[RMDB]
RNA sequence: GGGAACGACUCGAGUAGAGUCGAAAAACAUCGGAUUACGAUCCGAUGAAACAUCAGCCAAUGGUUGGCUGAUCGCUAUCGGAUAACGUGUGCUUUUGGUUAUUUGACAGCGGUUCUCUUUCUAUAAGAUUGUCCGGUGUUUCGACACCGGACAAUCAAAAGAAACAACAACAACAAC
Reactivity to 2A3 in 0.01 (KOAc 150mM, MgCl2 10mM, bicine 150mM(pH8.5), 24C), signal-to-noise 2, nucleotides 027 to 126: a000c010a000u000c000g010g000a000u060u000a040c130g100a040u000c030c000g000a000u000g000a030a030a000c040a020u020c000a000g000c000c000a070a170u300g270g000u260u090g000g050c030u010g020a000u000c000g000c000u050a040u000c000g030g030a000u000a050a000c010g070u210g060u170g260c080u170u080u090u250g130g000u030u060a020u000u040u000g040a030c030a000g000c000g010g010u000u000c000u000c000u020u030u060c010u100a160u000a170a000
Source: RMDB library RFM100, as collected in RNAgym. The record gives the reactivity of an RNA of 177 nucleotides to 2A3. 2A3 adducts were read by reverse transcription with SuperScript II with manganese. Conditions: 150 mM KOAc, 10 mM MgCl2 and 150 mM bicine (pH 8.5), 24 C. For 2A3, 632 sequencing reads were counted.